[RMDB]
RNA sequence: GGGAACGACUCGAGUAGAGUCGAAAAAUGGUAGUUAGUCUACUCGGUAUCCUAGUUACUUUGGAGUAAUCUAAAGUGUGUGUAAACGGGCGAAAGUCUGUAAAAUACUGGGGACAUAGGGUCAACAAGAACUAGUAGACCUUCGGGUCUACUAGAACUAUUCAUCAGAGUUCGCUCUGAUGAAUAGAAAAGAAACAACAACAACAAC
Reactivity to 2A3 in 0.01 (KOAc 150mM, MgCl2 10mM, bicine 150mM(pH8.5), 24C), signal-to-noise 4, nucleotides 027 to 156: a000u100g030g030u040a060g040u120u040a040g030u020c030u020a060c010u030c040g010g010u050a050u070c000c010u010a040g020u040u070a020c020u000u010u040g010g010a040g020u110a100a160u020c010u020a020a000a010g010u030g010u000g010u010g050u100a060a160a030c010g010g000g000c010g030a110a030a010g020u010c010u010g040u060a050a090a030a010u110a030c030u000g020g000g000g010a000c010a030u110a050g060g010g030u060c010a020a030c020a120a080g080a090a050c010u000a000g000u010a000g000a010c000c000u010u020c170g050g000g000u000c000u000a000c000u000a000g000a000a000
Reactivity to DMS in 0.01 (KOAc 150mM, MgCl2 10mM, bicine 150mM(pH8.5), 24C), signal-to-noise 3, nucleotides 027 to 156: a090u000g040g010u000a040g020u000u000a100g020u000c020u000a040c000u000c080g040g070u000a080u000c010c020u010a080g030u000u000a030c010u000u000u020g020g010a030g010u020a150a140u000c020u000a030a020a020g030u020g020u010g030u000g020u010a040a160a070c040g010g000g000c010g000a150a110a160g020u000c000u000g020u000a030a070a040a060u000a020c030u010g000g000g020g000a060c060a130u000a070g000g040g000u010c050a060a090c090a070a130g010a150a140c000u000a010g000u000a020g010a000c000c000u000u010c300g040g010g000u000c000u000a000c000u000a000g030a040a100